[RMDB]
RNA sequence: GGGAACGACUCGAGUAGAGUCGAAAAUGAUCGAGAGAUCUAACGAUGUACGCGAGUCAAUCGCACAGACUCGAGCGAAAGCUCGGUCGAAAGACCGCGUACAUCGGUCGGCAAGUGUGCAGUCAAAGCAUACGGUCGACUUCGGUCGACCGUAUGCAAAAGAAACAACAACAACAAC
Reactivity to DMS in 0.01 (KOAc 150mM, MgCl2 10mM, bicine 150mM(pH8.5), 24C), signal-to-noise 1, nucleotides 027 to 126: u010g000a030u030c000g030a200g000a270g000a000u000c010u000a040a100c000g000a040u000g070u000a000c040g000c030g000a140g060u000c000a030a120u000c010g000c180a010c130a280g030a010c030u010c010g000a000g010c020g000a150a030a170g010c000u000c000g040g000u030c000g000a000a110a250g000a000c000c010g040c000g000u000a000c000a000u000c020g000g020u000c090g030g000c070a050a050g080u130g010u000g000c060a150g030u040c120a050a100a100
Conditions: 150 mM KOAc, 10 mM MgCl2 and 150 mM bicine (pH 8.5), 24 C. This 177-nucleotide RNA was probed chemically with DMS. Values cover nucleotides 27 to 126.